[RMDB]
RNA sequence: GGGAACGACUCGAGUAGAGUCGAAAAACAUAGGUUGGGCCAUAGGCGCUGCGGUUCAUCAUGUUGCCCUCGCCAGGACCGCUCCCGUUCUACUACUUGGCGUCGCGGAUACCGGGUUGGAAAACAAGUUUAGAUUACCUUUCGAGGUAAUCUAAACAAAAGAAACAACAACAACAAC
Reactivity to DMS in 0.01 (KOAc 150mM, MgCl2 10mM, bicine 150mM(pH8.5), 24C), signal-to-noise 5, nucleotides 027 to 126: a070c080a090u000a100g030g000u000u000g000g000g030c010c020a080u000a110g020g010c040g000c070u000g000c070g020g000u000u000c060a100u000c070a070u010g010u000u000g010c070c010c010u000c070g000c030c020a080g000g000a070c050c030g000c030u000c050c030c010g020u010u010c060u000a090c090u010a060c080u010u010g010g010c060g010u010c090g010c050g010g000a090u000a080c030c020g010g000g020u000u000g010g000a060a050a060a080c160a060a080
Reactivity to 2A3 in 0.01 (KOAc 150mM, MgCl2 10mM, bicine 150mM(pH8.5), 24C), signal-to-noise 2, nucleotides 027 to 126: a000c030a020u180a070g060g050u050u090g050g010g000c000c070a070u060a110g070g000c020g030c100u030g020c040g060g000u030u040c030a040u040c010a030u150g090u070u110g060c000c000c010u010c020g010c010c010a020g010g020a040c000c030g000c040u040c000c020c010g030u060u050c040u100a140c020u010a030c020u020u040g040g000c040g030u060c030g000c010g080g000a020u060a100c010c010g000g080g000u060u100g080g030a020a080a010a050c050a130a050